RNA sequence: GGGAACGACUCGAGUAGAGUCGAAAAUUUAAUGUGCUCAGAACGUCCAUCGACAGCCUCCAUUUCUAAGUCUUGAUGGUUGAUCGAGCCGAUCUGCAACGAGGCGUUCGUUCGGAGUCGGAGAUCGGACUGGGGUUACUUUCGAGUAACCCCAGUCAAAAGAAACAACAACAACAAC
Reactivity to 2A3 in 0.01 (KOAc 150mM, MgCl2 10mM, bicine 150mM(pH8.5), 24C), signal-to-noise 1, nucleotides 027 to 126: u090u170u170a120a120u200g090u150g040c020u040c040a020g000a010a000c010g030u000c020c000a090u020c070g010a040c030a030g070c000c110u060c000c020a060u080u090u030c110u160a130a200g040u070c040u130u120g010a060u070g070g000u040u100g050a120u050c050g000a020g100c000c000g020a060u000c030u030g050c030a060a080c060g030a040g120g080c130g060u080u010c010g010u010u010c050g020g040a080g110u110c000g030g020a020g010a030u090c050g010
Reactivity to DMS in 0.01 (KOAc 150mM, MgCl2 10mM, bicine 150mM(pH8.5), 24C), signal-to-noise 2, nucleotides 027 to 126: u020u000u000a070a120u000g020u000g040c010u000c020a120g010a030a080c040g010u000c030c110a110u010c040g010a070c050a090g000c060c040u000c030c050a110u000u010u010c120u030a080a150g020u010c070u000u020g010a040u000g010g050u000u000g000a130u000c000g000a050g020c030c030g000a060u010c000u000g000c180a090a050c090g000a060g000g010c060g020u000u000c040g000u000u000c020g010g010a090g020u000c000g010g000a100g000a040u000c060g000
An RNA of 177 nucleotides, treated with 2A3 and DMS and read out base by base. For DMS the reverse transcriptase was MarathonRT. Values cover nucleotides 27 to 126. The 2A3 profile rests on 913 reads. For DMS, 1,644 sequencing reads were counted.